[RMDB]
RNA sequence: GGGAACGACUCGAGUAGAGUCGAAAAGUAAAUGCUCCAGGGAGUCUCCUCCCUGUCAGACAAUAUGCCCUGUGGUAAGGGACCAUGUGUAAUAACCCUGCUAAGUGUUUUCAGUGGCUACCUAGCAAAGCUUACCGAGUUUCGACUCGGUAAGCUUAAAAGAAACAACAACAACAAC
Reactivity to DMS in 0.01 (KOAc 150mM, MgCl2 10mM, bicine 150mM(pH8.5), 24C), signal-to-noise 1, nucleotides 027 to 126: g010u020a110a120a120u010g020c010u000c120c000a020g000g010g000a000g000u000c240u000c300c010u010c000c010c020u010g000u000c050a000g000a110c070a060a060u000a090u000g010c030c000c010u000g010u020g000g000u000a120a050g000g000g010a160c030c030a030u000g020u000g010u000a050a090u000a070a040c010c040c010u000g000c050u000a040a060g030u000g000u000u000u010u000c100a110g010u000g010g010c050u020a120c010c020u000a080g000c090a090

Source: RMDB library OK2TRN, as collected in RNAgym. An RNA of 177 nucleotides, treated with DMS and read out base by base. The reactions ran in a buffer of 150 mM KOAc, 10 mM MgCl2 and 150 mM bicine (pH 8.5), at 24 C. Values cover nucleotides 27 to 126. Reactivities are rounded to 0.1 and cut off at 0 and 3.